[RMDB]
RNA sequence: GGGAACGACUCGAGUAGAGUCGAAAACUGGCGCUGAGGUCGAGCACUAUGGCAUCAGCCUGCACGGAACGCCCGUAUGACUUUAUGGAUUUGAUAUCGUACAUGUCAUACACGUGCUCUAGAUCCGACUCCUUUGCGGCGAGGUCGUGCGUGUAGAGCCUCCAAGAUGUUUCGACAUCUUGGAGGCAAAAGAAACAACAACAACAAC
Reactivity to 2A3 in 0.01 (KOAc 150mM, MgCl2 10mM, bicine 150mM(pH8.5), 24C), signal-to-noise 1, nucleotides 027 to 156: c000u090g010g000c020g000c000u020g000a030g020g060u020c100g040a050g110c080a090c170u060a110u200g060g040c030a020u000c000a020g030c060c030u020g030c010a140c100g000g060a250a050c090g000c010c030c000g000u000a000u000g000a000c000u070u060u070a030u090g160g030a120u080u210u300g160a130u130a000u160c020g000u030a050c000a160u050g020u000c000a000u040a000c010a000c080g000u020g060c000u030c000u000a070g000a140u060c060c050g000a050c070u110c020c000u080u180u300g060c130g090g000c110g030a020g060g040u040c000g060u100g010c020g000u080g000u010a020g000a000
Structure probing data (2A3) for a 207-nucleotide construct. Reactivities are given for positions 27 through 156. The data come from the RNA Mapping Database (RMDB), library OK3TST.